[RMDB]
RNA sequence: GGGAACGACUCGAGUAGAGUCGAAAAAGCGGCUACGGCCGCAUCUUUAGUGAAGGAGAAAGGGGCUAGGUGGUGGGAUAGGUAACUGAGACUCAACGCCACAUGGCUCUGUCUUCUGCCUCAGAAAAUGUGGAUGUUUUUUCGAAAACAUCCACAUAAAAGAAACAACAACAACAAC
Reactivity to DMS in 0.01 (KOAc 150mM, MgCl2 10mM, bicine 150mM(pH8.5), 24C), signal-to-noise 3, nucleotides 027 to 126: a080g010c000g040g020c020u020a110c180g050g010c010c010g010c010a010u020c020u000u020u030a110g020u040g000a100a030g000g010a050g010a020a080a110g000g000g000g000c020u000a050g020g060u000g000g000u000g000g020g010a090u020a030g000g010u010a010a080c180u010g010a160g010a060c050u010c100a080a100c030g000c010c000a010c020a050u010g030g000c010u000c010u010g000u030c070u010u000c000u000g000c020c010u000c090a120g000a080a050a100
Reactivity to 2A3 in 0.01 (KOAc 150mM, MgCl2 10mM, bicine 150mM(pH8.5), 24C), signal-to-noise 4, nucleotides 027 to 126: a010g000c000g020g010c010u010a050c280g080g000c010c000g000c000a030u020c000u040u150u100a130g040u060g150a060a010g000g000a010g030a010a060a020g000g010g020g000c060u050a050g040g040u010g000g030u080g030g020g030a090u140a090g000g040u030a120a080c100u140g070a030g030a190c010u030c100a020a050c020g000c000c000a020c000a030u050g000g000c010u010c000u010g020u000c000u010u000c000u050g140c000c010u030c010a020g100a060a100a000
Structure probing data (DMS and 2A3) for a 177-nucleotide construct. For 2A3 the reverse transcriptase was SuperScript II with manganese. 2A3 is a SHAPE reagent: it acylates the 2'-hydroxyl of flexible nucleotides of all four kinds. The reactions ran in a buffer of 150 mM KOAc, 10 mM MgCl2 and 150 mM bicine (pH 8.5), at 24 C. The 2A3 profile rests on 3,613 reads.